Conditions: 150 mM KOAc, 10 mM MgCl2 and 150 mM bicine (pH 8.5), 24 C. An RNA of 177 nucleotides, treated with DMS and 2A3 and read out base by base. Values are in units of 0.01, from 0 to 300, in steps of 10. 2A3 adducts were read by reverse transcription with SuperScript II with manganese.
RNA sequence: GGGAACGACUCGAGUAGAGUCGAAAACGGCGGGGAUCCAUCCAGGGGAGCCGAACGGCAUGGGAGGGCCGGCGGCACAGGGUUACAGCCCCGUAGGCGCACCCUGGGAUGGACCCCGGCGGAGGUCGACAUGGUAUGUUUUCGAACAUACCAUGUCAAAAGAAACAACAACAACAAC
Reactivity to DMS in 0.01 (KOAc 150mM, MgCl2 10mM, bicine 150mM(pH8.5), 24C), signal-to-noise 3, nucleotides 027 to 126: c010g000g000c010g000g020g000g000a130u000c000c000a010u000c000c010a050g030g030g000g010a300g010c000c000g000a030a010c010g000g000c000a010u000g000g010g010a210g020g000g000c000c000g000g030c000g020g010c110a030c010a260g000g000g000u000u050a050c190a100g000c030c000c000c010g000u000a290g000g000c020g000c100a300c000c000c000u000g010g010g010a020u000g000g000a010c000c000c000c000g010g000c000g000g000a080g010g000u010c140
Reactivity to 2A3 in 0.01 (KOAc 150mM, MgCl2 10mM, bicine 150mM(pH8.5), 24C), signal-to-noise 4, nucleotides 027 to 126: c010g140g000c000g010g000g010g040a110u000c000c000a000u000c000c000a000g010g000g000g000a020g000c000c000g000a030a020c010g010g020c020a050u060g040g050g020a040g000g030g000c000c010g000g010c010g010g010c010a010c050a020g040g000g000u030u130a020c010a010g010c000c000c000c000g000u010a010g010g000c020g010c090a070c010c000c000u020g010g030g000a000u000g010g000a000c000c000c000c000g000g000c000g000g030a040g020g140u160c100